[RMDB]
Chemical mapping of a 177-nucleotide RNA with DMS and 2A3.
The DMS profile rests on 6,104 reads.
RNA sequence: GGGAACGACUCGAGUAGAGUCGAAAACAAGUAAUUUUGGGGAUUAUCUCUUCCUGCAGAAGAAGCUGUGGGAUCUGACAAUCAAUGUGUCCAUGAAAGUCCUCAGCUUAAGAAAGAUGUAUUGCGGAAACACUCUAAGGUUCGCCUUAGAGUGUUUAAAAGAAACAACAACAACAAC
Reactivity to DMS in 0.01 (KOAc 150mM, MgCl2 10mM, bicine 150mM(pH8.5), 24C), signal-to-noise 6, nucleotides 027 to 126: c080a070a160g010u010a080a090u000u000u010u010g010g010g020g010a130u010u000a080u010c070u000c050u000u000c010c000u010g000c050a050g010a180a130g020a080a070g020c010u010g010u010g000g010g000a010u000c060u000g010a040c040a050a080u000c200a130a090u010g000u000g000u010c020c170a140u000g000a080a090a150g010u000c000c000u000c020a020g000c040u000u000a060a090g000a100a060a070g000a080u010g010u000a070u010u000g010c060g000g000
Reactivity to 2A3 in 0.01 (KOAc 150mM, MgCl2 10mM, bicine 150mM(pH8.5), 24C), signal-to-noise 2, nucleotides 027 to 126: c030a040a020g130u190a080a250u050u130u120u100g030g000g010g020a020u110u080a050u150c030u000c000u030u050c010c000u040g000c030a010g020a260a000g080a020a010g080c000u010g040u110g000g020g000a020u030c030u070g000a010c010a040a090u180c020a070a110u300g070u040g010u110c030c020a100u160g110a140a050a000g010u020c000c000u000c000a020g010c020u060u060a100a010g060a030a070a000g080a000u130g050u130a100u030u230g080c020g030g090
In probing experiments dimethyl sulfate is read out at A N1 and C N3, which are open when not base-paired. The reactions ran in a buffer of 150 mM KOAc, 10 mM MgCl2 and 150 mM bicine (pH 8.5), at 24 C.